Structure probing data (2A3 and DMS) for a 177-nucleotide construct. Reactivities are given for positions 27 through 126. It was measured as part of the RMDB library VIROID. For DMS the reverse transcriptase was MarathonRT. 2A3 is a SHAPE reagent: it acylates the 2'-hydroxyl of flexible nucleotides of all four kinds. Conditions: 150 mM KOAc, 10 mM MgCl2 and 150 mM bicine (pH 8.5), 24 C.
RNA sequence: GGGAACGACUCGAGUAGAGUCGAAAAAUUGUUCCAGCAUCUGAUGUAGAAGCAAUGGCGCAGUCCUAGGCAUCGACGGUGUCGAAGCAAUGGCGUAGACCUCAGGCACCGAGUAUGUGUAUCGGAGCUGUAAACAUUGGUUCGCCAAUGUUUACAGAAAAGAAACAACAACAACAAC
Reactivity to 2A3 in 0.01 (KOAc 150mM, MgCl2 10mM, bicine 150mM(pH8.5), 24C), signal-to-noise 2, nucleotides 027 to 126: a000u020u070g000u020u000c010c000a010g040c010a030u000c040u280g150a300u120g060u210a040g020a150a010g030c040a060a190u100g020g000c040g000c070a010g030u000c000c000u040a040g100g000c010a000u000c010g140a120c060g000g040u000g000u000c000g010a000a000g030c020a030a030u300g030g000c070g040u060a100g040a230c000c000u010c050a010g000g000c000a010c000c000g000a010g030u210a040u100g090u040g070u020a060u140c060g030g000a030g030
Reactivity to DMS in 0.01 (KOAc 150mM, MgCl2 10mM, bicine 150mM(pH8.5), 24C), signal-to-noise 3, nucleotides 027 to 126: a120u000u020g010u000u000c010c010a120g000c040a040u000c040u010g010a110u010g020u000a060g020a060a070g010c030a090a080u000g000g000c110g010c060a070g010u000c000c010u000a100g010g010c020a020u000c030g020a150c000g010g000u000g000u010c000g010a110a070g000c020a080a040u010g020g010c010g020u000a090g000a140c010c000u000c030a100g010g000c010a020c000c000g000a060g050u010a030u000g010u000g020u000a080u000c050g000g010a200g000